[RMDB]
RNA sequence: GGGAACGACUCGAGUAGAGUCGAAAAAUGCCGACCCGAAGAAGGAAAGGAGGACACGGACGACAAACCGUAGGUACUCUUGCCCUUUAUUGUUGGGUGCACCCUGGGACCCAGUAAUACCCGGGGGGUAAUACGAUAACUUCGGUUAUCGUAUUACAAAAGAAACAACAACAACAAC
Reactivity to DMS in 0.01 (KOAc 150mM, MgCl2 10mM, bicine 150mM(pH8.5), 24C), signal-to-noise 9, nucleotides 027 to 126: a100u000g010c050c100g010a090c010c020c000g020a090a140g010a030a020g000g010a070a300a040g000g000a030g030g000a190c110a030c020g010g010a060c060g010a130c300a070a120a060c010c000g010u000a030g020g000u000a160c000u000c000u000u000g010c300c010c010u000u000u000a070u020u010g010u000u010g000g000g010u000g010c060a080c010c000c000u000g000g000g000a040c010c010c010a160g010u000a010a030u000a100c010c000c000g010g000g000g000g000
Reactivity to 2A3 in 0.01 (KOAc 150mM, MgCl2 10mM, bicine 150mM(pH8.5), 24C), signal-to-noise 6, nucleotides 027 to 126: a000u110g020c030c030g070a050c000c010c000g030a070a050g020a010a010g010g020a030a010a000g020g010a010g010g000a000c000a000c020g020g060a050c050g020a030c130a020a060a020c000c000g010u030a090g040g050u100a020c000u010c000u010u010g020c000c010c010u040u050u040a230u080u180g140u030u080g010g000g000u010g010c010a070c000c000c000u000g000g030g000a060c010c020c040a080g100u160a040a030u100a180c000c000c000g000g000g010g000g000
The data come from the RNA Mapping Database (RMDB), library 15KREP. This 177-nucleotide RNA was probed chemically with DMS and 2A3. Values cover nucleotides 27 to 126. For DMS the reverse transcriptase was MarathonRT. The reactions ran in a buffer of 150 mM KOAc, 10 mM MgCl2 and 150 mM bicine (pH 8.5), at 24 C.